Background
Chemical mapping of a 177-nucleotide RNA with 2A3. The 2A3 profile rests on 329 reads. Values cover nucleotides 27 to 126. Conditions: 150 mM KOAc, 10 mM MgCl2 and 150 mM bicine (pH 8.5), 24 C. Values are in units of 0.01, from 0 to 300, in steps of 10.
[RMDB]
RNA sequence: GGGAACGACUCGAGUAGAGUCGAAAACAAUAUUAACGACUGGAAUAGUUCUGGAAUGAUUCACGUGUGUUACCUUUCAUUCUAUUGCGUGAUAACGGGAAUAUCCUGACGAUAGCCCGGUGUGGUCCAUGCUCCGGCUCUUCGGAGCCGGAGCAUGAAAAGAAACAACAACAACAAC
Reactivity to 2A3 in 0.01 (KOAc 150mM, MgCl2 10mM, bicine 150mM(pH8.5), 24C), signal-to-noise 1, nucleotides 027 to 126: c000a030a020u150a150u160u300a000a030c130g130a090c000u030g050g050a000a100u140a050g180u060u010c000u090g050g020a070a060u300g010a000u100u010c080a000c000g000u300g050u000g050u090u160a040c000c000u060u000u060c010a140u030u260c080u130a010u240u000g000c000g100u030g010a030u000a000a000c000g000g000g000a030a030u000a000u000c000c000u010g010a000c010g040a000u100a130g000c000c000c000g000g000u040g060u060g000g010u010c030